Source: RMDB libraries RFM100 and RFMREP, as collected in RNAgym. The record gives the reactivity of an RNA of 177 nucleotides to 2A3 and DMS. The reactions ran in a buffer of 150 mM KOAc, 10 mM MgCl2 and 150 mM bicine (pH 8.5), at 24 C.

RNA sequence: GGGAACGACUCGAGUAGAGUCGAAAAUACUCCCGUUCAUCCCUGAGUUGCUCGUGCGUACGAUCCGUUUUCUUUGAGUCGCGUUGUUUGGGAAUGCAGCGCAAAGUAGGUGGUAAAUUCCAUCUAAAGAUCGAACAAAGUUCGCUUUGUUCGAUCUAAAAGAAACAACAACAACAAC
Reactivity to 2A3 in 0.01 (KOAc 150mM, MgCl2 10mM, bicine 150mM(pH8.5), 24C), signal-to-noise 3, nucleotides 027 to 126: u120a010c040u010c010c000c000g040u070u100c040a150u060c020c000c010u040g010a060g040u050u070g040c010u000c070g030u050g030c040g030u050a040c040g020a070u030c030c020g040u020u000u080u010c050u050u070u100g060a040g050u120c030g000c020g020u000u050g040u030u030u060g080g010g020a040a050u050g000c020a000g010c010g000c000a000a020a000g120u070a010g010g020u010g020g000u000a050a140a080u150u040c000c000a010u000c000u000a030a090
Reactivity to DMS in 0.01 (KOAc 150mM, MgCl2 10mM, bicine 150mM(pH8.5), 24C), signal-to-noise 3, nucleotides 027 to 126: u030a110c170u010c000c020c020g000u030u010c070a120u000c010c000c000u020g000a120g010u000u010g000c010u010c050g010u020g020c090g000u010a070c040g000a040u030c030c040g020u000u000u020u000c030u010u000u020g010a100g010u010c100g000c040g000u000u010g010u000u030u020g020g020g010a100a090u000g000c000a010g000c030g050c030a090a060a100g000u000a010g010g040u000g000g010u010a070a070a210u030u050c000c010a020u000c020u010a040a070